[RMDB]
RNA sequence: GGGAACGACUCGAGUAGAGUCGAAAAUUCGCCGGCGCUAAACGGGAGGGCUUCUGCGUUGGCUUCCCGCCAGCCGAGCUCCAGUCCGGCUGCCGCAGCACGCGCCUGGGCGCGGCGCAGCAGCUCGGAUGAGGGAUCAUUUCGAUGAUCCCUCAUCAAAAGAAACAACAACAACAAC
Reactivity to DMS in 0.01 (KOAc 150mM, MgCl2 10mM, bicine 150mM(pH8.5), 24C), signal-to-noise 4, nucleotides 027 to 126: u010u000c100g020c010c000g010g010c010g020c150u000a040a120a180c040g000g000g010a050g010g010g000c020u000u010c110u000g010c150g020u000u000g010g000c010u000u000c010c020c020g020c030c070a140g020c010c010g010a100g010c000u000c040c050a170g000u000c010c020g010g000c000u000g000c000c010g010c000a100g030c010a120c020g020c000g010c010c060u010g010g010g010c000g030c000g000g010c000g010c010a030g000c010a010g010c000u010c040g020
Reactivity to 2A3 in 0.01 (KOAc 150mM, MgCl2 10mM, bicine 150mM(pH8.5), 24C), signal-to-noise 2, nucleotides 027 to 126: u100u090c050g030c020c010g020g010c010g010c190u140a040a070a050c020g010g010g020a050g030g040g060c010u100u040c090u230g190c110g090u100u080g000g000c000u020u010c000c000c000g000c000c020a020g010c010c000g020a050g010c010u000c040c030a020g080u030c020c010g010g000c010u010g000c000c020g000c040a050g000c080a130c160g000c000g020c030c070u210g190g180g000c000g010c030g010g000c000g000c000a000g000c010a000g000c060u200c080g030